RNA sequence: GGGAACGACUCGAGUAGAGUCGAAAAAUACUGCUUAGGAUGUUGGUACUUAAGAAAAGGUCAACUUUUCAAAAAUACUAUUAGUGACAUGUGGACCUAGUCCUCCUGAAGAGGACUACAUUGGGGCAUCCUCAUGAAUGUUCGCAUUCAUGAGGAUAAAAGAAACAACAACAACAAC
Reactivity to 2A3 in 0.01 (KOAc 150mM, MgCl2 10mM, bicine 150mM(pH8.5), 24C), signal-to-noise 2, nucleotides 027 to 126: a020u040a040c010u020g070c000u120u050a040g020g050a040u060g020u110u060g070g040u020a070c000u090u040a100a030g010a040a040a020a010g020g030u160c050a170a080c000u000u020u000u050c040a080a070a040a010a020u080a040c050u050a050u280u140a050g050u030g100a000c020a060u060g020u040g070g010a020c000c010u000a000g000u000c010c000u030c000c030u110g020a080a030g000a010g010g000a000c010u000a000c020a030u040u130g070g000g020g000c000
Reactivity to DMS in 0.01 (KOAc 150mM, MgCl2 10mM, bicine 150mM(pH8.5), 24C), signal-to-noise 4, nucleotides 027 to 126: a080u010a080c040u000g000c040u000u010a110g010g000a060u010g010u000u000g010g020u010a020c080u000u000a070a260g000a010a010a010a020g000g000u000c210a080a190c000u010u000u000u000c010a010a180a050a050a030u000a020c010u000a070u000u000a090g010u000g020a070c040a030u000g000u000g000g010a110c030c070u010a020g000u000c000c000u000c000c090u010g020a150a300g000a030g000g010a010c000u000a010c160a120u000u010g000g010g000g020c280

This 177-nucleotide RNA was probed chemically with 2A3 and DMS.
The DMS profile rests on 3,570 reads.
It was measured as part of the RMDB library OK2TRN.